An RNA of 177 nucleotides, treated with DMS and 2A3 and read out base by base. Values cover nucleotides 27 to 126. For 2A3 the reverse transcriptase was SuperScript II with manganese. The 2A3 profile rests on 854 reads. Conditions: 150 mM KOAc, 10 mM MgCl2 and 150 mM bicine (pH 8.5), 24 C.
[RMDB]
RNA sequence: GGGAACGACUCGAGUAGAGUCGAAAACUUACAACACCGGGUUGAUGUUUGGAGCCGGACACUCGAGUUCGCAUGUUGCGGCGCGGGAUGCGGGGCCCGAGAAUCUCUCAGUGCCCACCACUCAAAAGGGUAAAUUUAUCUUCGGAUAAAUUUACCCAAAAGAAACAACAACAACAAC
Reactivity to DMS in 0.01 (KOAc 150mM, MgCl2 10mM, bicine 150mM(pH8.5), 24C), signal-to-noise 1, nucleotides 027 to 126: c070u000u000a110c100a030a060c080a140c000c090g000g000g000u080u000g030a050u010g000u020u000u000g010g020a160g020c030c000g000g010a150c090a040c000u010c040g000a010g020u000u040c030g000c150a050u000g000u010u000g000c060g010g000c100g010c110g000g000g000a070u000g000c110g050g010g030g000c040c010c000g000a040g000a040a050u020c030u000c010u000c050a100g010u000g010c010c040c010a160c190c110a150c150u040c110a040a100a220a200
Reactivity to 2A3 in 0.01 (KOAc 150mM, MgCl2 10mM, bicine 150mM(pH8.5), 24C), signal-to-noise 2, nucleotides 027 to 126: c020u090u180a110c070a120a030c000a050c060c030g020g020g050u130u050g060a120u040g070u030u020u190g070g000a030g000c060c030g010g070a030c010a030c020u040c000g020a010g060u160u170c000g000c030a080u120g020u150u160g110c030g000g000c010g000c000g000g000g050a030u030g040c030g000g000g000g040c000c010c030g000a000g000a010a110u020c090u010c000u010c070a020g010u000g000c010c000c000a040c000c010a030c020u000c070a010a090a140a060